About this RNA
Chemical mapping of a 177-nucleotide RNA with DMS. The DMS profile rests on 1,294 reads.
RNA sequence: GGGAACGACUCGAGUAGAGUCGAAAAGAUAUGGAAUUUGCCUGAGCAACAGCUCGGAAACGAGACAUGCUUUGGCGGGAUUCCUAAGUCAAAGGAGUGCUCAACGGUUCGCCGUUGAGCACUCCAACCUGAAGAUGAGGUUCGCCUCAUCUUCAGGAAAAGAAACAACAACAACAAC
Reactivity to DMS in 0.01 (KOAc 150mM, MgCl2 10mM, bicine 150mM(pH8.5), 24C), signal-to-noise 2, nucleotides 027 to 126: g000a060u040a300u010g000g010a010a020u000u000u010g020c000c000u000g000a000g000c000a040a060c250a190g020c010u000c010g000g000a060a130a200c000g010a000g020a050c090a220u000g020c000u000u000u000g000g030c010g010g020g000a030u000u000c000c000u000a060a200g000u000c040a090a120a100g010g010a040g070u000g000c000u010c000a010a010c000g000g000u000u010c300g010c000c030g030u000u000g010a020g000c000a000c000u000c000c010a000a000
Description
The RNA was probed in 150 mM KOAc, 10 mM MgCl2 and 150 mM bicine (pH 8.5) at 24 C. For DMS the reverse transcriptase was MarathonRT. Values cover nucleotides 27 to 126.